Source: RMDB library M2RFOK, as collected in RNAgym. This 207-nucleotide RNA was probed chemically with 2A3. Conditions: 150 mM KOAc, 10 mM MgCl2 and 150 mM bicine (pH 8.5), 24 C.
RNA sequence: GGGAACGACUCGAGUAGAGUCGAAAAAACGUUGCAUGAUCGUAAAACAUGCCCGGCUUACCGUGAGCCGCCUUUGAAAGAAAGGUUUACACGGACUCUGUUGCGUUACGCGCGUACCUAACUUGUGAAAACGGCAUCUUGUUCGCAAGAUGCCGAACAUUCGAUUGCGGUUCGCCGCAAUCGAAUGAAAAGAAACAACAACAACAAC
Reactivity to 2A3 in 0.01 (KOAc 150mM, MgCl2 10mM, bicine 150mM(pH8.5), 24C), signal-to-noise 2, nucleotides 027 to 156: a000a000c000g000u000u000g020c000a000u000g000a060u130c030g070u220a050a140a000a000c000a000u010g000c010c000c000g000g010c010u010u010a120c010c000g000u000g010a000g000c000c000g040c010c010u000u030u000g120a130a050a000g050a000a000a000g000g050u030u010u010a030c000a000c000g010g010a050c060u100c060u160g060u090u090g000c020g010u030u030a050c150g050c000g000c020g030u010a020c000c030u080a120a180c060u100u050g080u090g160a020a090a020a020c000g000g000c000a000u000c000u010u020g020u020u090c060g030c110a000a000g000a000u010g050c000c000g000a000a000